[RMDB]
About this RNA:
The record gives the reactivity of an RNA of 177 nucleotides to 2A3 and DMS. For 2A3 the reverse transcriptase was SuperScript II with manganese. The DMS profile rests on 29,600 reads.
RNA sequence: GGGAACGACUCGAGUAGAGUCGAAAACGAGGUAGUCGAGUUCUCCUUGCCAUCGGACGGUGCCAUGUGCGAGAAUACGCCGAGCGUCUGCUUGGUGACCUGCGACACGUCCAGGAUGUGCUCGGUGAAUGGUAGCAGUAUUCGUACUGCUACCAUUAAAAGAAACAACAACAACAAC
Reactivity to 2A3 in 0.01 (KOAc 150mM, MgCl2 10mM, bicine 150mM(pH8.5), 24C), signal-to-noise 9, nucleotides 027 to 126: c040g010a040g070g110u150a040g070u070c030g050a030g060u050u010c030u020c010c000u030u050g030c010c000a060u050c040g030g020a020c040g060g120u110g040c040c020a110u160g060u090g080c060g050a070g060a100a080u220a110c020g000c000c010g000a010g000c010g130u140c190u290g030c010u030u030g020g000u030g040a080c010c020u070g030c030g040a040c030a020c090g020u000c020c000a030g110g000a020u070g070u100g020c010u000c020g030g020u060g060
Reactivity to DMS in 0.01 (KOAc 150mM, MgCl2 10mM, bicine 150mM(pH8.5), 24C), signal-to-noise 7, nucleotides 027 to 126: c050g020a080g010g010u020a030g000u000c040g010a200g010u010u000c030u000c010c010u010u000g010c020c020a030u000c040g000g000a050c050g010g010u010g020c060c050a100u020g020u030g000c030g010a100g010a120a110u040a160c070g000c000c010g000a010g010c010g010u020c150u040g010c030u000u010g010g000u000g010a070c070c020u000g000c040g000a090c050a050c090g000u010c020c020a110g010g000a040u010g010u030g030c010u010c060g010g010u000g000